[RMDB]
RNA sequence: GGGAACGACUCGAGUAGAGUCGAAAAGAUAUGGAUUUCGAGCCCUUGAAAAUCGCGUGUGUCGGAAACGACACACGGCGAGAAGCGAUGAGAAAUCCUAAGUCAAAGAAGAGCUUCGGCUCUUCAACUUCUUCAAAGUGUUCGCACUUUGAAGAAGAAAAGAAACAACAACAACAAC
Reactivity to DMS in 0.01 (KOAc 150mM, MgCl2 10mM, bicine 150mM(pH8.5), 24C), signal-to-noise 2, nucleotides 027 to 126: g000a030u010a100u000g000g000a030u000u000u020c000g010a300g040c040c010c110u020u000g000a160a110a150a080u000c000g040c000g000u000g030u000g040u010c000g050g010a030a010a060c000g030a020c000a000c000a000c000g030g060c010g010a030g000a170a120g030c100g010a140u000g010a220g000a010a000a010u000c000c000u000a020a050g010u000c020a130a070a150g000a030a000g000a020g000c010u010u030c270g010g000c000u000c000u000u000c000a060a220
Reactivity to 2A3 in 0.01 (KOAc 150mM, MgCl2 10mM, bicine 150mM(pH8.5), 24C), signal-to-noise 1, nucleotides 027 to 126: g010a010u030a010u060g030g010a000u000u030u010c040g000a010g020c020c000c000u020u130g230a260a230a070a180u070c040g000c030g050u030g010u030g000u000c000g020g030a020a020a000c030g000a010c000a000c040a000c040g080g080c020g010a020g020a060a020g000c070g090a140u120g080a150g000a290a000a000u010c010c010u010a050a000g010u020c050a300a030a060g010a020a010g000a000g000c010u090u230c300g190g000c000u010c010u030u010c010a030a010
Chemical mapping of a 177-nucleotide RNA with DMS and 2A3.
The 2A3 profile rests on 1,245 reads.
2A3 adducts were read by reverse transcription with SuperScript II with manganese.
The reactions ran in a buffer of 150 mM KOAc, 10 mM MgCl2 and 150 mM bicine (pH 8.5), at 24 C.
DMS adducts were read by reverse transcription with MarathonRT.